This 177-nucleotide RNA was probed chemically with DMS and 2A3.
[RMDB]
RNA sequence: GGGAACGACUCGAGUAGAGUCGAAAACCACGAUGCAAGUUCAGGGCGCGGCUGGAGGUGGCGUCACUGCCGGUGGAACCCAAGGCGGUUUCAUCACCAGCGCUACGGUCGGCGAGGUCAGCGUGGCAUCUGGACUGCAAUUCGUUGCAGUCCAGAUAAAAGAAACAACAACAACAAC
Reactivity to DMS in 0.01 (KOAc 150mM, MgCl2 10mM, bicine 150mM(pH8.5), 24C), signal-to-noise 2, nucleotides 027 to 126: c010c020a100c120g010a060u020g010c040a120a090g000u000u010c050a070g010g000g030c040g000c140g010g020c040u000g020g040a110g000g000u010g010g000c020g000u000c180a070c090u030g020c110c080g010g050u000g000g000a030a010c000c000c060a210a210g020g000c140g030g010u000u010u000c010a010u000c010a060c120c010a100g000c030g000c020u010a070c050g040g020u010c010g020g020c050g010a110g010g000u000c060a070g010c000g060u000g010g010c080
Reactivity to 2A3 in 0.01 (KOAc 150mM, MgCl2 10mM, bicine 150mM(pH8.5), 24C), signal-to-noise 2, nucleotides 027 to 126: c000c000a020c060g070a020u080g030c050a110a050g040u100u110c040a060g000g080g040c030g020c030g180g000c020u020g100g000a110g020g080u070g040g010c020g050u050c080a040c070u040g080c060c070g050g000u010g000g010a000a030c030c050c030a080a070g230g060c230g070g010u040u030u000c010a020u040c000a030c050c010a000g020c000g020c060u040a030c040g120g090u070c040g080g050c020g030a020g000g060u070c030a000g040c040g060u030g080g010c020
Source information:
The 2A3 profile rests on 1,430 reads. The RNA was probed in 150 mM KOAc, 10 mM MgCl2 and 150 mM bicine (pH 8.5) at 24 C.